[RMDB]
RNA sequence: GGGAACGACUCGAGUAGAGUCGAAAAAGCUGGUAGUACUACGGUACUACGAGCAUAAUUCGUGGUUCGAAAACCUCCCACGCAAAAAAACUAAGGAAAAACGCCGAGUAGUACGCUACUCGGCGAAGGUACCGGAAUCAGUUCGCUGAUUCCGGAAGCUAGAUAAAGUCUUCGGACUUUAUCUAGCAAAAGAAACAACAACAACAAC
Reactivity to 2A3 in 0.01 (KOAc 150mM, MgCl2 10mM, bicine 150mM(pH8.5), 24C), signal-to-noise 2, nucleotides 027 to 156: a000g040c040u130g050g010u000a000g000u010a010c010u000a010c180g170g000u000a000c000u000a010c000g020a010g000c010a040u180a090a130u100u120c020g010u030g010g050u050u090c090g050a070a030a160a160c000c010u040c000c000c000a010c010g070c050a100a130a040a050a030a060a110c070u170a100a180g000g060a080a090a000a050a010c010g000c010c000g000a000g000u000a010g020u030a010c110g000c080u010a000c000u000c030g000g000c010g000a000a000g010g010u060a040c000c000g020g010a000a000u010c010a020g050u080u090c120g020c100u000g000a000u000u000c010c000g000g010a000a000

An RNA of 207 nucleotides, treated with 2A3 and read out base by base. The RNA was probed in 150 mM KOAc, 10 mM MgCl2 and 150 mM bicine (pH 8.5) at 24 C. The 2A3 profile rests on 1,079 reads.